Structure probing data (2A3 and DMS) for a 177-nucleotide construct. DMS adducts were read by reverse transcription with MarathonRT. Values are in units of 0.01, from 0 to 300, in steps of 10. 2A3 is a SHAPE reagent: it acylates the 2'-hydroxyl of flexible nucleotides of all four kinds. It was measured as part of the RMDB library RFMREP. The reactions ran in a buffer of 150 mM KOAc, 10 mM MgCl2 and 150 mM bicine (pH 8.5), at 24 C.
RNA sequence: GGGAACGACUCGAGUAGAGUCGAAAACGUCUGGUGGCGCUGGCCGGGACUACAACUCAAGCCGUCGGAUACGCCGUGCAGGAUUCGGCGGACGGUGACGCGCUGCGUCAAAGAUCGGUGAUUGGCGGCCAUAUAGAGUGUUCGCACUCUAUAUGGCAAAAGAAACAACAACAACAAC
Reactivity to 2A3 in 0.01 (KOAc 150mM, MgCl2 10mM, bicine 150mM(pH8.5), 24C), signal-to-noise 2, nucleotides 027 to 126: c010g060u010c030u070g190g030u070g020g010c020g010c020u010g050g000c040c050g000g010g090a040c040u110a050c110a180a040c030u040c110a060a000g030c000c000g010u010c010g000g010a050u050a130c040g020c030c060g070u110g020c070a120g000g170a090u050u020c010g000g000c000g000g010a000c010g000g020u050g040a030c010g010c000g010c040u080g000c020g020u020c010a040a030a000g050a050u100c070g000g070u070g030a180u040u100g050g030c030g040
Reactivity to DMS in 0.01 (KOAc 150mM, MgCl2 10mM, bicine 150mM(pH8.5), 24C), signal-to-noise 2, nucleotides 027 to 126: c090g010u010c010u000g030g020u010g010g000c060g000c030u010g020g020c020c030g000g030g010a070c070u030a090c150a090a100c130u010c100a110a200g000c040c000g020u000c000g020g000a100u010a200c050g000c040c070g000u000g060c120a080g010g000a090u010u000c020g010g000c000g000g000a050c000g010g010u010g000a070c020g000c050g040c080u000g010c020g000u010c020a050a090a020g000a110u010c060g010g000u000g010a170u000u000g030g000c110g030